[RMDB]
Background: This 177-nucleotide RNA was probed chemically with DMS and 2A3. For DMS, 1,361 sequencing reads were counted. For 2A3, 1,898 sequencing reads were counted. Conditions: 150 mM KOAc, 10 mM MgCl2 and 150 mM bicine (pH 8.5), 24 C. For 2A3 the reverse transcriptase was SuperScript II with manganese.
RNA sequence: GGGAACGACUCGAGUAGAGUCGAAAAGGCUGUGAAGAUCACUAUUCCCAACGCUUGGAAUGAAAAUUACUGAUUAUAAUCCAAUCCUUUUCUGAGCCAAAAAGAACUCUACGUUCGCGUAGAGUUCCUUUACACAGAUGUUCGCAUCUGUGUAAAGAAAAGAAACAACAACAACAAC
Reactivity to DMS in 0.01 (KOAc 150mM, MgCl2 10mM, bicine 150mM(pH8.5), 24C), signal-to-noise 2, nucleotides 027 to 126: g000g000c200u020g000u000g010a150a060g000a120u000c060a070c080u010a170u000u000c010c010c000a130a160c270g010c080u000u020g000g000a020a030u000g000a060a100a100a120u000u000a050c130u010g000a060u000u000a090u000a050a070u000c100c100a060a060u000c020c070u000u010u000u000c030u000g020a020g030c010c240a030a050a050a090a080g010a020a010c000u000c000u000a000c000g010u010u010c210g020c010g000u000a010g000a020g010u000u000c000
Reactivity to 2A3 in 0.01 (KOAc 150mM, MgCl2 10mM, bicine 150mM(pH8.5), 24C), signal-to-noise 2, nucleotides 027 to 126: g070g000c140u070g020u050g130a130a080g060a200u160c030a010c070u040a100u000u020c010c010c030a050a070c070g000c030u020u030g000g040a030a040u040g050a060a110a130a160u160u120a130c040u070g050a070u040u190a100u080a220a070u040c030c040a040a040u030c000c010u020u090u060u030c000u040g050a010g020c000c000a050a120a080a000a000g020a000a000c010u000c000u000a000c010g000u020u030c260g020c000g090u010a000g000a000g000u010u000c000